[RMDB]
The record gives the reactivity of an RNA of 177 nucleotides to 2A3 and DMS. DMS (dimethyl sulfate) methylates the pairing face of unpaired adenines and cytosines. It was measured as part of the RMDB library OK1LIB. For 2A3 the reverse transcriptase was SuperScript II with manganese.
RNA sequence: GGGAACGACUCGAGUAGAGUCGAAAACGCAGGUCAUUGCUGUGAAGAUGGGGGACGGAUAUGAGCAGCGUCGCCCGGCAGGCCUCAAUAGCAACCUGGCGAAAUACAAUGUGACCAUAAAAGUGCGCAUUUAGCCAUGAUUCGUCAUGGCUAAAUGAAAAGAAACAACAACAACAAC
Reactivity to 2A3 in 0.01 (KOAc 150mM, MgCl2 10mM, bicine 150mM(pH8.5), 24C), signal-to-noise 9, nucleotides 027 to 126: c020g010c020a010g000g030u040c050a070u040u140g010c030u020g030u040g100a100a090g060a110u210g010g000g000g000g060a020c040g030g020a040u090a120u300g110a100g040c040a020g030c000g010u010c000g170c020c000c000g010g000c030a030g000g080c000c020u060c050a100a160u120a070g010c010a010a050c010c000u010g060g010c010g020a090a060a010u200a050c070a030a050u150g040u040g060a060c020c000a030u180a090a150a040a020g180u120g030c040g000
Reactivity to DMS in 0.01 (KOAc 150mM, MgCl2 10mM, bicine 150mM(pH8.5), 24C), signal-to-noise 6, nucleotides 027 to 126: c020g030c040a030g010g000u010c100a070u010u000g010c020u000g010u000g000a120a120g000a110u060g000g010g000g000g000a040c060g010g010a160u050a090u030g010a130g010c080a080g000c030g000u000c010g000c010c010c010g000g000c080a060g010g010c070c050u030c140a080a060u000a100g010c040a080a090c030c010u000g000g010c040g020a070a060a070u040a050c220a070a050u030g000u000g000a080c010c020a150u030a110a070a080a080g010u010g000c060g000